[RMDB]
An RNA of 177 nucleotides, treated with DMS and 2A3 and read out base by base. The reactions ran in a buffer of 150 mM KOAc, 10 mM MgCl2 and 150 mM bicine (pH 8.5), at 24 C.
RNA sequence: GGGAACGACUCGAGUAGAGUCGAAAACUGCCGACGCCCUGUGUUGAGGCGUGGUGUCGCCUCGAGACAGUCGUUGAGAGCCGAAGAAGGUUGUACAUCUGACUGUUCGAGCAGAUGUGAGUCGAGGGCGUCUGCCGACGUUCGCGUUGGUGGGCGCAAAAGAAACAACAACAACAAC
Reactivity to DMS in 0.01 (KOAc 150mM, MgCl2 10mM, bicine 150mM(pH8.5), 24C), signal-to-noise 9, nucleotides 027 to 126: c030u010g000c020c010g000a040c020g000c100c190c010u000g010u000g000u000u000g000a030g000g010c000g020u000g010g020u040g010u020c010g000c010c000u000c000g010a030g000a010c000a010g010u040c020g010u000u000g000a140g010a070g000c020c030g000a110a100g020a130a120g010g000u000u010g010u010a050c010a010u000c010u010g000a090c020u010g010u040u030c180g010a080g000c010a010g000a020u000g000u010g000a080g010u000c020g000a180g000g000
Reactivity to 2A3 in 0.01 (KOAc 150mM, MgCl2 10mM, bicine 150mM(pH8.5), 24C), signal-to-noise 9, nucleotides 027 to 126: c020u040g020c010c010g020a010c000g020c010c080c010u040g010u020g060u050u080g040a030g010g020c030g000u030g050g140u140g070u070c020g000c010c000u010c010g000a010g020a000c000a000g010u040c000g000u000u020g050a060g000a010g050c010c020g030a070a040g050a080a030g080g010u020u020g040u070a020c000a020u000c020u100g090a180c010u040g140u260u140c070g080a010g000c000a010g000a030u040g030u020g030a050g030u050c020g020a060g030g080